[RMDB]
RNA sequence: GGGAACGACUCGAGUAGAGUCGAAAAGAUAUGGAGUGGGUUGACAUGAACCAGGUCGGAAACGACCUGAAGUUCAACAGCAACACCACUCCUAAGUCAAAGAAUGACUCUGUUCGCAGAGUCAUUCGAUGUGGCGUAGCUUCGGCUACGCCACAUCAAAAGAAACAACAACAACAAC
Reactivity to DMS in 0.01 (KOAc 150mM, MgCl2 10mM, bicine 150mM(pH8.5), 24C), signal-to-noise 1, nucleotides 027 to 126: g000a010u000a090u010g010g020a040g040u000g010g000g000u000u000g000a030c140a180u010g010a000a000c000c010a020g000g010u000c000g040g040a010a020a100c020g000a010c000c000u020g000a060a110g010u000u010c010a160a100c250a160g000c010a010a020c010a120c000c000a000c000u000c000c000u000a000a030g010u000c020a090a140a130g000a020a010u000g000a000c000u010c000u000g000u000u000c270g000c010a010g000a000g010u000c000a000u000u000c000
Reactivity to 2A3 in 0.01 (KOAc 150mM, MgCl2 10mM, bicine 150mM(pH8.5), 24C), signal-to-noise 2, nucleotides 027 to 126: g020a000u020a010u060g010g010a000g000u000g000g000g070u000u010g070a210c240a300u300g010a060a000c000c000a000g000g050u020c000g000g030a000a000a000c000g000a000c000c000u000g000a040a000g000u090u000c020a110a110c080a130g060c000a000a000c100a170c020c020a000c000u000c000c000u000a010a000g000u000c020a070a130a110g050a000a000u010g000a000c000u020c010u000g090u150u190c270g000c150a000g030a000g010u000c000a000u000u020c020